[RMDB]
This 177-nucleotide RNA was probed chemically with 2A3.
2A3 is a SHAPE reagent: it acylates the 2'-hydroxyl of flexible nucleotides of all four kinds.
RNA sequence: GGGAACGACUCGAGUAGAGUCGAAAAGCUCGUACCGUGAGGCGUCCUGUUAAGUCAGGCAACGAGCGAGACCCGCACUUCUAGUUGCCAGCAAUACCCUUGAGGUAGUUGGGUACACUAGGAGGACCGUUGUCCACCGGUUCGCCGGUGGACAACGAAAAGAAACAACAACAACAAC
Reactivity to 2A3 in 0.01 (KOAc 150mM, MgCl2 10mM, bicine 150mM(pH8.5), 24C), signal-to-noise 2, nucleotides 027 to 126: g020c020u030c030g010u050a130c010c060g060u110g110a110g020g000c060g060u110c000c020u020g030u010u100a090a230g300u110c010a000g030g000c030a030a000c000g000a000g000c000g010a030g040a040c000c000c000g000c050a030c000u000u000c000u000a010g000u000u000g000c000c000a010g020c000a000a010u000a000c020c000c000u200u270g070a130g150g000u000a000g000u000u000g040g000g000u000a010c030a000c090u000a000g000g000a000g000g020a020c020